[RMDB]
RNA sequence: GGGAACGACUCGAGUAGAGUCGAAAACAUCAGGAGGACCUUCCGCGCACUUGCAAGCAGGAGCUUUCCUUCCAAGCGCACUUCCAAUCUACUCGAGAGGAGGAGGAGGAGGAGGAUUCCCACAAAAGUUUGAUCUACAAUUCGUUGUAGAUCAAACAAAAGAAACAACAACAACAAC
Reactivity to DMS in 0.01 (KOAc 150mM, MgCl2 10mM, bicine 150mM(pH8.5), 24C), signal-to-noise 4, nucleotides 027 to 126: c100a060u020c140a160g010g000a060g020g000a090c300c040u010u000c030c030g010c060g020c050a120c100u010u000g000c170a050a100g020c060a100g000g000a050g000c130u010u000u010c030c010u000u010c050c040a100a070g010c060g010c100a110c130u000u000c010c060a150a110u010c010u000a030c020u000c010g000a030g000a200g000g020a090g000g000a040g000g010a080g000g010a070g000g010a060g000g000a150u000u000c000c000c000a110c190a050a070a060a100
Reactivity to 2A3 in 0.01 (KOAc 150mM, MgCl2 10mM, bicine 150mM(pH8.5), 24C), signal-to-noise 3, nucleotides 027 to 126: c010a060u150c040a010g040g000a010g010g030a050c000c000u070u040c040c030g020c020g010c050a130c110u140u230g010c070a120a100g000c010a030g020g020a000g010c030u150u090u070c000c000u090u000c010c000a070a020g070c040g030c070a050c050u050u010c020c020a020a100u000c010u040a040c010u010c020g040a050g010a040g040g050a040g000g030a030g010g030a030g000g000a030g000g020a020g010g000a080u020u020c010c000c010a050c040a020a100a000a000
Overview: The record gives the reactivity of an RNA of 177 nucleotides to DMS and 2A3. Conditions: 150 mM KOAc, 10 mM MgCl2 and 150 mM bicine (pH 8.5), 24 C. For DMS the reverse transcriptase was MarathonRT. The DMS profile rests on 2,539 reads.